Chemical mapping of a 177-nucleotide RNA with DMS and 2A3. The 2A3 profile rests on 2,660 reads. The RNA was probed in 150 mM KOAc, 10 mM MgCl2 and 150 mM bicine (pH 8.5) at 24 C. It was measured as part of the RMDB library M2PK90. For 2A3 the reverse transcriptase was SuperScript II with manganese.
[RMDB]
RNA sequence: GGGAACGACUCGAGUAGAGUCGAAAAGGGUUUGGAUUACAUCAAUAGUAACAUGAGCAGAAGUAAACAGAACAUGAAGUACUGCGGUUAUUCAAGUUCAAAGUUCACACUAUCGCAAUAAAGGGAACUGAUAGUAUCACUUCGGUGAUACUAUCAGAAAAGAAACAACAACAACAAC
Reactivity to DMS in 0.01 (KOAc 150mM, MgCl2 10mM, bicine 150mM(pH8.5), 24C), signal-to-noise 4, nucleotides 027 to 126: g020g000g010u000u010u010g010g010a110u000u000a050c090a090u010c090a040a060u000a090g020u000a050a070c120a080u000g000a090g020c020a060g020a100a070g030u010a040a050a070c050a100g000a050a040c030a060u000g010a050a070g020u000a030c020u000g030c110g020g010u000u000a130u000u000c040a030a070g000u000u000c020a040a080a100g000u000u010c050a050c060a060c110u000a030u000c050g010c070a040a060u010a040a090a070g000g010g020a080a150
Reactivity to 2A3 in 0.01 (KOAc 150mM, MgCl2 10mM, bicine 150mM(pH8.5), 24C), signal-to-noise 3, nucleotides 027 to 126: g060g030g000u050u060u080g070g030a070u040u110a040c010a060u110c040a050a130u080a120g030u040a020a110c030a120u050g030a010g000c070a040g000a150a020g080u110a070a050a010c010a030g000a010a010c010a010u080g010a010a010g010u010a000c010u020g050c090g050g020u020u000a020u050u040c030a040a020g020u010u010c000a070a060a030g000u050u080c020a030c010a010c070u070a080u160c030g000c090a040a030u120a170a080a010g070g000g000a050a040